[RMDB]
RNA sequence: GGGAACGACUCGAGUAGAGUCGAAAAUAUUCACUUAAGGCUGCAGUCCAUGGGUGGAAGAUGGUUGUGUGUGAUAAGGUACGUUCUCUCAAAUUGAGUGAUAAUAAUUGUUAUCUUAAUGCAGUUAAUACCCGUGUGUUCGCACACGGGAAAAGAAACAACAACAACAAC
Reactivity to DMS in 0.01 (KOAc 150mM, MgCl2 10mM, bicine 150mM(pH8.5), 24C), signal-to-noise 3, nucleotides 027 to 129: u040a120u000u000c060a090c040u100u030a110a100g030g030c050u000g070c050a060g020u020c070c020a090u010g000g040g090u050g000g020a080a060g050a080u000g010g060u010u010g080u000g020u110g080u020g020a110u000a090a000g030g000u010a050c090g050u100u000c060u020c020u050c110a080a110a110u050u060g010a040g010u040g030a090u000a090a100u030a080a050u060u100g030u000u000a050u010c120u010u020a080a060u040g000c030a130g020u000u000a020a120u040a090
Reactivity to 2A3 in 0.01 (KOAc 150mM, MgCl2 10mM, bicine 150mM(pH8.5), 24C), signal-to-noise 2, nucleotides 027 to 129: u140a020u180u100c000a030c030u000u080a000a130g080g000c020u050g060c090a170g030u020c030c000a090u130g010g080g000u060g030g000a080a100g080a070u010g000g000u000u000g030u010g000u000g000u000g090a100u000a190a060g030g000u040a000c000g000u030u010c000u000c000u000c100a080a170a180u080u240g000a010g070u020g100a040u000a220a000u010a040a000u110u050g000u110u000a000u000c040u030u060a000a000u150g130c060a000g050u000u000a050a000u190a100